[RMDB]
RNA sequence: GGGAACGACUCGAGUAGAGUCGAAAAAUAAUAGGAUAUGAAAAUGAGUUUAUAUGUAGUCUAGGUAACUAGGCUACAUAAAUGAGACCUAUUAUACCGGCUGAAACGGCAGUCCUCCCAGGAGCAACAAACACUUAUCGUUCGCGAUAAGUGUUUGAAAAGAAACAACAACAACAAC
Reactivity to DMS in 0.01 (KOAc 150mM, MgCl2 10mM, bicine 150mM(pH8.5), 24C), signal-to-noise 1, nucleotides 027 to 126: a060u000a020a000u020a010g010g000a130u010a160u040g000a050a040a060a110u000g010a290g000u000u000u000a090u000a020u020g000u020a000g050u000c000u000a020g010g030u010a160a050c000u000a020g000g000c000u000a000c000a000u000a000a000a010u000g000a110g020a100c010c000u000a000u010u000a000u010a110c150c040g000g000c010u000g000a070a070a090c070g010g000c200a090g000u020c020c020u000c000c000c020a240g030g010a000g010c200a110a110
Reactivity to 2A3 in 0.01 (KOAc 150mM, MgCl2 10mM, bicine 150mM(pH8.5), 24C), signal-to-noise 1, nucleotides 027 to 126: a000u010a000a010u000a000g000g000a050u040a070u300g090a030a130a150a100u110g010a050g110u040u100u150a200u010a000u080g000u000a000g000u000c000u040a010g010g010u010a130a110c010u010a010g000g010c010u000a010c000a000u010a000a000a000u060g030a010g000a010c000c000u000a000u000u000a010u010a010c070c000g000g000c000u020g030a090a150a000c000g060g010c030a010g020u000c000c010u000c000c000c000a060g080g110a060g090c040a010a110